[RMDB]
RNA sequence: GGGAACGACUCGAGUAGAGUCGAAAAGAUAUGGAUCCUGUGUAGGGAGCGUAGUAUCGGAAACGAUAUGGGCGCAUCGAUCUACCAGGAUCCUAAGUCAAAAGGAGACGCGUUCGCGCGUCUCCAAUCAGAAUGAAAUCUUCGGAUUUCAUUCUGAAAAAGAAACAACAACAACAAC
Reactivity to DMS in 0.01 (KOAc 150mM, MgCl2 10mM, bicine 150mM(pH8.5), 24C), signal-to-noise 3, nucleotides 027 to 126: g010a040u000a150u000g020g000a020u000c000c010u000g000u020g030u010a000g010g010g020a130g040c010g010u010a300g010u000a000u010c000g020g000a040a030a050c000g010a020u000a000u000g000g020g020c000g030c000a150u000c270g010a110u000c000u010a010c000c000a000g000g000a000u000c010c000u000a000a040g000u000c020a090a110a140a140g010g010a020g010a010c010g020c010g000u010u000c300g020c010g030c010g030u010c000u000c000c000a020a040
Reactivity to 2A3 in 0.01 (KOAc 150mM, MgCl2 10mM, bicine 150mM(pH8.5), 24C), signal-to-noise 2, nucleotides 027 to 126: g000a000u010a010u060g000g000a000u020c000c010u060g070u070g020u190a000g060g080g120a300g040c000g000u070a040g000u000a050u020c010g000g020a010a010a020c010g000a010u010a010u060g280g300g000c030g000c010a050u300c220g190a300u000c010u010a000c000c000a010g000g010a010u010c000c000u010a010a000g000u000c000a000a040a080a220g000g000a010g000a000c020g030c030g020u050u150c300g000c000g000c010g130u000c000u000c000c000a000a010
Structure probing data (DMS and 2A3) for a 177-nucleotide construct. For DMS, 3,516 sequencing reads were counted. DMS adducts were read by reverse transcription with MarathonRT. Conditions: 150 mM KOAc, 10 mM MgCl2 and 150 mM bicine (pH 8.5), 24 C. Reactivities are given for positions 27 through 126.